This 177-nucleotide RNA was probed chemically with 2A3.
RNA sequence: GGGAACGACUCGAGUAGAGUCGAAAAUCACGAAUUUCUUUGUACAACGCCAGAAUAUGCAGCAGAUUCAGGUGCUGGCGUUUGUACUCAUGCAAACGUUUGAUCUGAAUAUCGAAAAUCGCCUGUGCCGUGGUAGCGGUUUCGACCGCUACCACGGAAAAGAAACAACAACAACAAC
Reactivity to 2A3 in 0.01 (KOAc 150mM, MgCl2 10mM, bicine 150mM(pH8.5), 24C), signal-to-noise 1, nucleotides 027 to 126: u250c000a070c010g070a080a070u000u090u020c070u010u120u100g020u070a060c020a060a030c030g090c000c000a000g070a300a140u210a090u240g080c010a000g010c000a020g140a300u270u000c030a030g000g010u040g100c000u000g000g000c000g000u000u000u080g020u010a000c070u110c060a030u270g070c000a120a020a080c090g010u040u020u040g020a000u030c060u040g040a020a090u110a000u190c000g150a120a080a040a040u030c070g000c020c070u030g000u080g030